[RMDB]
RNA sequence: GGGAACGACUCGAGUAGAGUCGAAAAAUGGGAUUGACACGAUCCAUCAACGUCCUAGUGGUCGGAGCAGCCUUCGUAUUCGUCGUGACGAUGCUUUUCAUCUGACGAAGAACGAUCACCGCAGACAGAAAUACGGUGCAUUCGUGCACCGUAUUUCAAAAGAAACAACAACAACAAC
Reactivity to DMS in 0.01 (KOAc 150mM, MgCl2 10mM, bicine 150mM(pH8.5), 24C), signal-to-noise 4, nucleotides 027 to 126: a070u020g000g030g030a030u000u000g030a100c150a090c140g010a070u000c010c000a070u010c160a100a140c160g000u000c020c030u000a050g000u010g020g000u000c030g000g000a100g010c020a090g000c140c100u000u000c040g030u010a150u000u000c020g010u020c020g020u020g020a030c140g010a040u020g030c300u020u010u020u010c020a090u010c020u000g010a040c030g000a010a020g010a060a060c000g010a020u010c130a050c030c080g010c080a090g000a140c130a130
Reactivity to 2A3 in 0.01 (KOAc 150mM, MgCl2 10mM, bicine 150mM(pH8.5), 24C), signal-to-noise 5, nucleotides 027 to 126: a000u110g050g010g040a020u020u090g060a060c030a020c180g020a020u010c010c010a020u060c040a060a110c070g040u010c000c010u010a030g040u020g080g000u030c010g030g040a060g060c020a010g000c020c020u040u060c030g000u030a040u000u020c000g010u000c030g060u110g070a070c080g000a040u120g070c140u240u160u110u130c020a020u010c030u060g000a010c010g010a010a010g020a040a040c010g000a010u030c020a000c040c020g010c030a030g030a070c000a070